The record gives the reactivity of an RNA of 177 nucleotides to 2A3 and DMS. The reactions ran in a buffer of 150 mM KOAc, 10 mM MgCl2 and 150 mM bicine (pH 8.5), at 24 C.
RNA sequence: GGGAACGACUCGAGUAGAGUCGAAAAGAUAUGGACUCCAGCCACUGAGCAACAGCUCGGAAACGAGACAUGCUUUGGCGGAGUCCUAAGUCAAAUCACAGCCGACAGUUCGCUGUCGGCUGUGAAACACUAAUCAUAUGUUCGCAUAUGAUUAGUGAAAAGAAACAACAACAACAAC
Reactivity to 2A3 in 0.01 (KOAc 150mM, MgCl2 10mM, bicine 150mM(pH8.5), 24C), signal-to-noise 4, nucleotides 027 to 126: g020a020u060a050u120g010g000a000c010u020c010c020a050g000c000c010a110c200u260g090a000g000c010a010a140c040a180g030c000u000c000g000g030a070a050a020c010g000a000g010a020c040a110u090g000c010u070u060u060g000g010c000g000g000a000g000u000c000c000u000a010a000g000u000c010a010a020a110u050c000a010c000a000g050c010c010g010a010c010a010g040u110u160c240g120c200u000g010u000c000g000g000c010u000g000u000g000a000a000a000
Reactivity to DMS in 0.01 (KOAc 150mM, MgCl2 10mM, bicine 150mM(pH8.5), 24C), signal-to-noise 7, nucleotides 027 to 126: g010a040u000a300u010g000g010a030c000u000c000c000a150g040c000c010a060c300u000g010a010g010c010a040a080c260a150g000c000u000c010g000g000a040a080a120c000g010a020g000a040c080a110u000g010c000u000u000u000g000g020c000g000g000a010g010u000c000c000u000a010a060g000u000c030a070a120a120u000c000a000c000a000g000c000c000g000a010c010a010g010u000u010c260g020c000u000g000u000c000g010g000c000u000g000u000g000a010a070a150